[RMDB]
RNA sequence: GGGAACGACUCGAGUAGAGUCGAAAAGAUAUGGAUCUUGGUGUAGCGAUGAAAUCGGAAACGAUGGAGCUAGACCACGGGAUCCUAAGUCAAAACUGCUUUAUUUUGUUCGCAAAAUAAAGCAGAACAGUCCACUACAGUUCGCUGUAGUGGACUGAAAAGAAACAACAACAACAAC
Reactivity to DMS in 0.01 (KOAc 150mM, MgCl2 10mM, bicine 150mM(pH8.5), 24C), signal-to-noise 2, nucleotides 027 to 126: g000a030u000a300u000g020g010a010u000c010u000u000g040g020u010g000u000a030g030c000g010a060u000g000a030a090a000u010c020g000g000a080a110a140c010g020a000u000g000g020a060g010c000u000a020g000a010c010c000a050c300g000g010g000a000u000c000c000u000a040a110g000u000c030a100a050a050a190c010u000g010c000u000u020u000a010u010u000u010u000g000u010u010c260g000c010a010a000a020a000u000a020a000a020g000c000a000g000a100a160
Reactivity to 2A3 in 0.01 (KOAc 150mM, MgCl2 10mM, bicine 150mM(pH8.5), 24C), signal-to-noise 1, nucleotides 027 to 126: g030a000u080a090u120g000g000a000u020c000u090u110g000g050u130g070u040a000g000c040g300a300u030g030a060a020a010u020c000g020g070a000a010a080c020g020a020u020g020g050a000g000c000u000a020g060a050c020c020a000c030g060g050g000a000u020c000c000u020a160a010g000u020c030a010a010a200a240c010u020g010c000u040u010u010a000u000u020u000u010g070u040u060c220g040c210a020a010a000a010u000a000a010a000g000c010a010g000a000a000